[RMDB]
RNA sequence: GGGAACGACUCGAGUAGAGUCGAAAAUUAAGGUAUAUAAGACGUGAAAAGUAUCACAGUGUUGGAUUGCUAAAUUCACGACUCUCAUGGAAUUCUGUCCAUUGGAAUACAGAAAGGAAAACUAAUUGUGAUUAGCAAUUAUUAUGUGAAAUGAGGACCAGGUAUUAAUCUUCGGAUUAAUACCUGGAAAAGAAACAACAACAACAAC
Reactivity to DMS in 0.01 (KOAc 150mM, MgCl2 10mM, bicine 150mM(pH8.5), 24C), signal-to-noise 2, nucleotides 027 to 156: u010u000a060a060g000g020u000a080u000a090u000a030a080g000a100c050g090u000g000a070a060a080a140g040u010a080u000c010a030c010a180g010u000g000u000u010g000g030a060u020u010g020c000u010a030a040a090u000u000c020a060c020g010a060c020u010c100u000c060a110u000g000g000a180a120u000u000c100u010g000u030c010c030a200u000u020g010g020a210a080u010a080c050a040g000a020a020a060g000g020a020a070a050a050c080u000a020a040u000u010g010u010g020a090u020u000a090g020c000a030a050u000u000a060u020u010a070u000g020u010g020a050a100a100u010g010a110g000g010a210
Reactivity to 2A3 in 0.01 (KOAc 150mM, MgCl2 10mM, bicine 150mM(pH8.5), 24C), signal-to-noise 2, nucleotides 027 to 156: u080u040a050a020g040g020u010a030u000a020u020a170a040g010a030c030g020u030g060a030a020a040a020g050u050a060u090c030a020c030a060g050u050g080u160u070g030g010a030u030u070g000c000u010a040a080a150u060u020c000a020c030g040a010c010u000c000u040c110a040u070g010g030a030a080u180u080c040u150g080u000c040c010a040u040u130g000g000a000a030u060a090c020a020g070a010a090a080g080g010a080a090a030a020c040u090a050a060u060u050g000u000g030a110u030u070a010g010c000a020a000u030u010a030u070u020a080u080g040u010g040a020a080a150u080g010a060g040g020a010